[RMDB]
This 177-nucleotide RNA was probed chemically with 2A3 and DMS.
RNA sequence: GGGAACGACUCGAGUAGAGUCGAAAAUUUUGGCCUUUUCGCGUAGGCAAAAAUGGUGAGGUCAGCCGACUUGGCGGAGGAACGCAGCCAACAAAGGUAACUGCGACUGGCGAAGGCACGUAGCCAAACGCGGUUCAAAGUUCGCUUUGAACCGCGUAAAAGAAACAACAACAACAAC
Reactivity to 2A3 in 0.01 (KOAc 150mM, MgCl2 10mM, bicine 150mM(pH8.5), 24C), signal-to-noise 1, nucleotides 027 to 126: u050u040u040u080g040g000c000c000u010u010u050u050c130g000c170g010u080a060g050g000c040a000a000a000a040a040u100g020g000u020g040a080g080g020u000c030a000g010c000c000g000a100c030u030u060g010g000c000g080g030a040g030g050a030a030c070g020c060a000g020c000c000a080a030c160a010a110a100g040g000u110a080a060c000u030g000c000g050a050c060u010g000g000c020g000a030a000g010g000c000a000c030g030u020a010g000c000c000a060a020
Reactivity to DMS in 0.01 (KOAc 150mM, MgCl2 10mM, bicine 150mM(pH8.5), 24C), signal-to-noise 1, nucleotides 027 to 126: u000u000u000u020g000g000c000c000u000u000u020u160c090g130c030g020u060a060g020g000c000a000a070a020a050a020u010g000g010u030g000a090g000g000u000c050a110g000c000c140g000a140c110u020u000g010g050c100g040g000a040g000g000a050a020c040g000c060a100g010c110c060a000a020c230a150a040a060g010g000u030a040a260c030u000g000c100g000a030c090u000g070g000c130g000a140a060g030g030c070a100c230g010u010a110g000c010c020a020a140
Overview:
It was measured as part of the RMDB library RFM100. The DMS profile rests on 1,206 reads. 2A3 is a SHAPE reagent: it acylates the 2'-hydroxyl of flexible nucleotides of all four kinds.